[RMDB]
Chemical mapping of a 177-nucleotide RNA with DMS and 2A3. As a SHAPE reagent, 2A3 marks flexible, mostly unpaired nucleotides at the ribose 2'-OH. The 2A3 profile rests on 2,460 reads. For DMS, 1,852 sequencing reads were counted.
RNA sequence: GGGAACGACUCGAGUAGAGUCGAAAAAUGGCCAAAAUUGAUAAUAUUCCUUGCAAUAGCAUGUUAGGUUCGCAUGGUGCACUAUUGUGUUAUUAGUAACUAAGUAAGCUUACAAUCGAAAAUGUUUAGAACAUAGUUAGUUCGCUAACUAUGUUCUAAAAGAAACAACAACAACAAC
Reactivity to DMS in 0.01 (KOAc 150mM, MgCl2 10mM, bicine 150mM(pH8.5), 24C), signal-to-noise 2, nucleotides 027 to 126: a070u000g010g000c050c070a030a060a070a070u000u000g010a120u010a080a080u010a130u000u000c010c010u000u000g020c040a040a030u000a050g010c030a040u010g030u000u000a060g010g010u000u000c180g030c040a080u010g020g020u010g000c050a100c040u000a040u000u010g040u000g000u000u010a030u000u000a070g020u010a050a070c150u000a030a070g010u010a060a070g020c100u000u000a070c100a050a080u010c110g010a050a080a070a080u010g010u000u000u000
Reactivity to 2A3 in 0.01 (KOAc 150mM, MgCl2 10mM, bicine 150mM(pH8.5), 24C), signal-to-noise 3, nucleotides 027 to 126: a000u050g040g000c000c040a010a000a050a090u140u080g050a040u030a260a030u050a130u090u030c020c000u000u030g010c010a020a040u010a070g000c010a000u020g020u020u020a070g080g050u080u130c090g000c010a040u130g190g020u180g060c020a010c030u000a030u090u080g030u010g000u040u000a010u020u010a050g020u010a040a000c020u010a090a000g140u010a080a030g110c020u040u070a010c050a050a060u080c060g110a030a120a000a050u120g030u050u020u030